RNA sequence: GGGAACGACUCGAGUAGAGUCGAAAACAGACACGCUGAUCACACCGCCAAGGGUAAGCUGCAUUUACCGUUUAAACUGACGCCAGGCCAAUGCCUUGUGCCACUGGCCCACGAGCCUUCCGUGGUGGCCUGUUGGAUCGUUCGCGAUCCAACAGGCAAAAGAAACAACAACAACAAC
Reactivity to 2A3 in 0.01 (KOAc 150mM, MgCl2 10mM, bicine 150mM(pH8.5), 24C), signal-to-noise 1, nucleotides 027 to 126: c010a010g060a030c010a000c070g040c000u030g040a040u110c020a000c010a010c050c030g000c020c010a020a000g040g020g010u020a050a000g040c040u000g000c070a070u080u090u080a090c020c000g020u010u070u110a130a090a030c080u080g030a020c040g040c030c000a030g030g000c030c020a010a040u100g000c000c000u040u110g060u100g040c020c000a060c020u000g020g020c050c030c000a060c010g010a000g040c050c000u050u000c010c040g030u040g000g070u060g060
Reactivity to DMS in 0.01 (KOAc 150mM, MgCl2 10mM, bicine 150mM(pH8.5), 24C), signal-to-noise 1, nucleotides 027 to 126: c110a110g010a050c040a020c090g000c000u000g010a090u020c060a080c040a090c080c050g000c030c050a080a110g000g010g000u010a060a070g000c090u020g000c080a070u000u000u000a060c020c050g030u000u000u000a060a050a070c100u000g040a050c020g010c040c050a050g000g000c040c100a040a050u010g010c010c020u000u000g090u030g020c060c040a060c060u000g000g010c010c000c000a050c070g010a110g010c070c010u000u010c010c020g000u010g000g020u000g030

About this RNA
The record gives the reactivity of an RNA of 177 nucleotides to 2A3 and DMS. For 2A3, 1,518 sequencing reads were counted. Conditions: 150 mM KOAc, 10 mM MgCl2 and 150 mM bicine (pH 8.5), 24 C.